[RMDB]
RNA sequence: GGGAACGACUCGAGUAGAGUCGAAAACGUCCGGUAUUGGAUUACGUCAAACGGGUCAGCAAGGAAUCGCCACGCACCGUGGUGACGGUGUUCAUCCCGGAGUACGUGGUGGGCCGAUGGUGGGAGCCCUCCUAGCCGGAUUCGUCCGGCUAGGAGGAAAAGAAACAACAACAACAAC
Reactivity to DMS in 0.01 (KOAc 150mM, MgCl2 10mM, bicine 150mM(pH8.5), 24C), signal-to-noise 1, nucleotides 027 to 126: c300g030u010c000c080g010g000u050a110u020u010g000g000a080u020u060a060c090g140u010c060a070a090a170c020g000g000g000u010c130a190g000c000a010a140g000g020a100a110u100c080g000c010c000a020c180g000c300a240c000c000g000u050g000g000u020g000a000c040g000g000u060g000u050u000c030a000u000c040c000c000g000g000a060g030u030a070c040g030u000g000g000u000g030g020g000c040c000g000a070u070g000g080u010g000g000g020a190g020c090
Reactivity to 2A3 in 0.01 (KOAc 150mM, MgCl2 10mM, bicine 150mM(pH8.5), 24C), signal-to-noise 2, nucleotides 027 to 126: c050g080u000c000c000g030g020u230a170u070u190g020g000a010u030u200a040c090g010u070c090a120a070a010c050g000g020g040u110c020a000g010c030a080a010g100g020a170a150u090c010g010c010c030a040c050g000c010a060c000c030g020u000g080g040u000g000a000c080g100g020u140g000u140u020c010a010u000c000c010c040g010g000a040g030u040a020c000g000u000g000g040u060g030g080g040c070c110g100a130u090g020g100u090g000g000g010a050g010c000

This 177-nucleotide RNA was probed chemically with DMS and 2A3. 2A3 adducts were read by reverse transcription with SuperScript II with manganese. For 2A3, 958 sequencing reads were counted.